[RMDB]
RNA sequence: GGGAACGACUCGAGUAGAGUCGAAAACUCAUAAAGGGUACUAAUUUGUUCACGUACCCGGUCAUCGAAAAGGGAGAGACGACGGUAUUGCGCUGGAUGAAUUUGUGAUGCUUGCUUAUCAAAUGGACCCUAAAAUCACUUUCGAGUGAUUUUAGGGAAAAGAAACAACAACAACAAC
Reactivity to DMS in 0.01 (KOAc 150mM, MgCl2 10mM, bicine 150mM(pH8.5), 24C), signal-to-noise 5, nucleotides 027 to 126: c020u010c020a130u010a100a110a160g010g010g020u000a010c010u020a140a100u000u010u010g020u000u000c150a120c180g000u000a010c020c000c010g000g010u000c090a050u010c080g010a040a070a080a090g000g000g000a100g000a080g000a060c060g010a070c080g010g000u010a060u000u000g010c060g020c040u000g010g010a100u000g000a050a080u000u010u010g020u000g000a080u000g000c040u000u000g010c050u000u000a100u010c100a050a090a080u010g000g000a300
Reactivity to 2A3 in 0.01 (KOAc 150mM, MgCl2 10mM, bicine 150mM(pH8.5), 24C), signal-to-noise 4, nucleotides 027 to 126: c020u000c010a020u230a070a110a030g040g020g020u030a020c020u030a030a190u100u110u170g130u070u080c050a020c080g000u000a000c000c000c000g000g000u020c020a060u030c020g060a030a050a060a070g040g040g000a050g000a000g020a030c060g000a010c030g000g020u050a080u090u090g020c040g000c050u020g000g040a040u030g030a070a110u060u070u080g040u030g020a040u030g020c030u070u040g030c010u120u100a080u160c040a020a000a180u070g080g030a040
An RNA of 177 nucleotides, treated with DMS and 2A3 and read out base by base. Source: RMDB library OK2TST, as collected in RNAgym. The reactions ran in a buffer of 150 mM KOAc, 10 mM MgCl2 and 150 mM bicine (pH 8.5), at 24 C. The DMS profile rests on 4,898 reads. Reactivities are given for positions 27 through 126.